[RMDB]
RNA sequence: GGGAACGACUCGAGUAGAGUCGAAAAAGAAAUAAACGGCACCAAUAAGGAGGUGCCCAACAAGCGUGACCUACCUACACGCAACAAGCAGUCAGGAAAGACUGCAAAGGAAAGGAAAACAAAAAAACAUAAAAGUGAUCUUCGGAUCACUUUUAUGAAAAGAAACAACAACAACAAC
Reactivity to 2A3 in 0.01 (KOAc 150mM, MgCl2 10mM, bicine 150mM(pH8.5), 24C), signal-to-noise 1, nucleotides 027 to 126: a000g050a020a040a000u150a120a070a040c040g040g000c000a000c000c010a030a270u240a140a060g100g000a030g000g000u000g000c000c000c000a050a030c050a020a020g020c010g010u000g010a090c020c010u050a120c030c000u040a030c000a000c040g040c020a060a050c010a100a000g000c010a000g000u000c020a010g190g210a120a120a130g000a010c000u000g020c020a000a050a000g040g000a120a040a000g000g060a050a080a050a010c090a010a200a010a000a000a000a000
Reactivity to DMS in 0.01 (KOAc 150mM, MgCl2 10mM, bicine 150mM(pH8.5), 24C), signal-to-noise 1, nucleotides 027 to 126: a050g020a090a160a100u000a030a080a060c180g000g000c010a020c010c000a090a110u040a080a180g000g000a150g000g030u010g000c000c000c090a050a100c190a050a050g020c050g030u000g020a060c020c070u000a110c060c010u000a150c000a020c000g000c000a110a050c090a090a160g020c000a010g000u000c010a080g030g020a140a140a040g000a020c010u010g030c000a000a030a100g000g000a040a040a080g000g000a070a100a070a030c090a000a000a030a090a060a040a110
An RNA of 177 nucleotides, treated with 2A3 and DMS and read out base by base. DMS adducts were read by reverse transcription with MarathonRT. The DMS profile rests on 926 reads.